[RMDB]
RNA sequence: GGGAACGACUCGAGUAGAGUCGAAAACAUGGAUCGUUCGCGAUCCAUGGCAGGUGGUGGUGGGACCAGGCGACCCAGGCUUUUGGCAUCCCAGCCUUUCCAAUCCAGCCUAUUUCGAUAGGCUGAACAGUCAGAACUGAUUCGUCAGUUCUGACUGAAAAGAAACAACAACAACAAC
Reactivity to 2A3 in 0.01 (KOAc 150mM, MgCl2 10mM, bicine 150mM(pH8.5), 24C), signal-to-noise 2, nucleotides 027 to 126: c010a000u010g000g000a000u000c020g010u090u070c230g020c010g100a000u000c000c010a000u000g020g000c060a030g000g140u100g010g020u040g020g190u070g020g030g000a030c020c020a030g020g000c020g030a100c010c010c020a020g110g010c000u110u120u170u160g040g000c030a060u040c000c020c000a020g000c030c010u000u040u020c000c020a030a060u080c050c010a000g000c000c010u000a000u020u070u020c060g070a000u000a000g020g000c000u000g000a020a020
Reactivity to DMS in 0.01 (KOAc 150mM, MgCl2 10mM, bicine 150mM(pH8.5), 24C), signal-to-noise 4, nucleotides 027 to 126: c000a010u000g010g000a000u010c000g010u000u010c190g030c010g010a010u000c000c000a000u000g000g010c160a040g010g020u000g000g020u010g010g020u010g010g010g020a110c020c020a050g000g010c050g010a100c040c030c050a130g000g010c030u000u000u000u000g000g000c070a090u000c010c010c010a160g000c010c010u000u010u000c020c030a120a130u010c130c000a010g000c000c000u000a020u000u000u010c180g010a010u000a010g000g010c000u000g000a050a090